Notes:
The record gives the reactivity of an RNA of 177 nucleotides to DMS and 2A3. Source: RMDB library TTRDEL, as collected in RNAgym. Conditions: 150 mM KOAc, 10 mM MgCl2 and 150 mM bicine (pH 8.5), 24 C.

RNA sequence: GGGAACGACUCGAGUAGAGUCGAAAAGAUAUGGAAUACCCGAUAAGACGCCAUCGGAAACGAUGGGCGUCUUUUGACGGGUUUUCCUAAGUCAAAACGAUUAAGCCUGUUCGCAGGCUUAAUCGAACAAGUAUGUUUAGUUCGCUAAACAUACUUGAAAAGAAACAACAACAACAAC
Reactivity to DMS in 0.01 (KOAc 150mM, MgCl2 10mM, bicine 150mM(pH8.5), 24C), signal-to-noise 9, nucleotides 027 to 126: g010a030u000a300u010g000g000a020a010u000a010c000c000c000g020a140u010a030a020g010a010c000g010c000c000a030u000c000g010g000a110a060a130c000g010a000u000g020g030g020c000g010u000c000u000u000u000u010g020a190c060g010g000g010u000u000u000u000c000c000u000a040a110g010u010c020a080a060a130a220c020g000a010u000u000a000a000g000c000c000u000g000u000u010c220g020c010a000g000g000c000u000u000a000a000u000c000g010a060a120
Reactivity to 2A3 in 0.01 (KOAc 150mM, MgCl2 10mM, bicine 150mM(pH8.5), 24C), signal-to-noise 4, nucleotides 027 to 126: g010a020u040a020u090g000g000a020a000u020a050c010c000c000g010a100u130a170a040g010a000c010g010c010c010a000u000c010g020g060a070a020a020c040g000a010u060g070g030g000c000g000u010c010u000u020u010u010g010a010c000g000g000g000u000u010u010u000c000c000u000a060a000g010u010c040a000a020a110a160c030g000a000u010u010a000a000g000c000c000u030g060u070u170c300g010c130a000g000g000c000u000u000a000a000u000c000g000a000a000